The data come from the RNA Mapping Database (RMDB), library OK3TST. The record gives the reactivity of an RNA of 207 nucleotides to 2A3 and DMS. For DMS, 2,494 sequencing reads were counted. The 2A3 profile rests on 624 reads. The reactions ran in a buffer of 150 mM KOAc, 10 mM MgCl2 and 150 mM bicine (pH 8.5), at 24 C.
RNA sequence: GGGAACGACUCGAGUAGAGUCGAAAAUAGUUUCACCCGGAAUCAAUGAAACUCAGCUUUCAGGGCUCUUCAUCUGCAUGGGUCCUUUGUAAGGGACCAGUGUUGAUAUUCAAAAGUGUGCAUUCUUUUUAUUAAGAAUAGCCUCCAAAAUUAGGUAACUACCUGAUUUAUUCGUAAAUCAGGUAGUAAAAGAAACAACAACAACAAC
Reactivity to 2A3 in 0.01 (KOAc 150mM, MgCl2 10mM, bicine 150mM(pH8.5), 24C), signal-to-noise 2, nucleotides 027 to 156: u070a010g020u030u000u040c030a030c040c020c020g050g110a050a060u140c110a000a070u070g070a180a170a180c000u030c030a050g020c030u090u170u170c060a050g020g030g020c000u030c000u090u080c000a050u000c000u040g000c010a010u010g040g010g040u030c030c000u060u010u190g080u190a100a110g000g000g050a010c000c000a000g000u000g000u010u010g010a050u010a120u160u140c110a030a050a120a170g030u030g040u070g040c000a000u000u020c000u030u010u020u170u110a300u240u200a050a000g010a020a010u050a100g010c030c020u000c000c070a070a080a060a140u200u180a130g020g050u180a030
Reactivity to DMS in 0.01 (KOAc 150mM, MgCl2 10mM, bicine 150mM(pH8.5), 24C), signal-to-noise 1, nucleotides 027 to 156: u000a070g010u000u000u000c030a160c000c000c040g010g010a120a110u010c060a060a050u000g000a090a060a090c070u000c160a120g000c060u000u000u000c070a130g010g010g040c070u000c090u030u000c070a080u000c050u010g010c030a050u000g000g030g040u000c000c000u000u010u010g020u010a120a160g000g020g000a050c010c000a070g040u000g030u000u000g000a080u010a100u000u000c090a080a130a130a100g000u000g030u040g030c010a090u000u010c000u000u000u000u010u030a120u100u020a130a020g000a040a010u000a110g010c000c000u000c040c040a040a060a040a170u000u000a050g000g020u000a080